[RMDB]
RNA sequence: GGGAACGACUCGAGUAGAGUCGAAAAUUCGGACGUAUGAUCCGCAACCACCGACGAACGCGCCGGGCGUGGUUGUCGCGGAGGUGUGGCUUGCGGCGGGCGCGACGAGUCUUGUGAGUGACGACGUUCGGGACCGCCGUGUGACGAACGACGCCAGAAUUCAGGAGAUGUUCGCAUCUCCUGAAUUAAAAGAAACAACAACAACAAC
Reactivity to 2A3 in 0.01 (KOAc 150mM, MgCl2 10mM, bicine 150mM(pH8.5), 24C), signal-to-noise 3, nucleotides 027 to 156: u080u040c020g010g030a010c020g100u130a100u170g100a180u040c020c000g000c020a110a130c000c020a020c010c000g040a060c020g020a110a000c050g050c000g020c070c300g240g090g000c010g000u030g000g060u020u050g030u030c010g000c140g010g060a050g010g000u010g000u020g040g000c040u030u110g000c010g010g000c000g000g000g000c290g000c020g060a010c010g010a000g010u000c060u110u300g120u120g100a200g070u190g020a010c050g030a050c000g040u040u220c020g000g010g070a040c000c000g000c010c000g010u010g010u020g010a010c030g000a040a010c030g030a030c020g000c030c010a100g100
Reactivity to DMS in 0.01 (KOAc 150mM, MgCl2 10mM, bicine 150mM(pH8.5), 24C), signal-to-noise 1, nucleotides 027 to 156: u000u010c040g020g030a050c030g010u020a100u010g000a110u010c010c000g000c050a050a050c020c000a090c030c080g010a010c000g010a080a090c020g020c020g030c030c040g080g010g000c050g030u000g030g010u010u000g000u000c030g000c120g030g020a160g010g010u000g000u000g030g050c040u000u010g020c010g010g000c020g020g000g000c000g080c020g030a060c010g000a280g000u000c010u040u010g000u000g020a280g030u010g020a000c020g020a250c040g040u040u010c020g010g000g030a080c040c010g000c020c020g000u000g000u010g000a120c030g030a100a110c050g000a120c040g070c000c000a140g000
The data come from the RNA Mapping Database (RMDB), library OK3TST.
Structure probing data (2A3 and DMS) for a 207-nucleotide construct.
For DMS, 3,724 sequencing reads were counted.
In probing experiments dimethyl sulfate is read out at A N1 and C N3, which are open when not base-paired.
For 2A3, 1,728 sequencing reads were counted.
DMS adducts were read by reverse transcription with MarathonRT.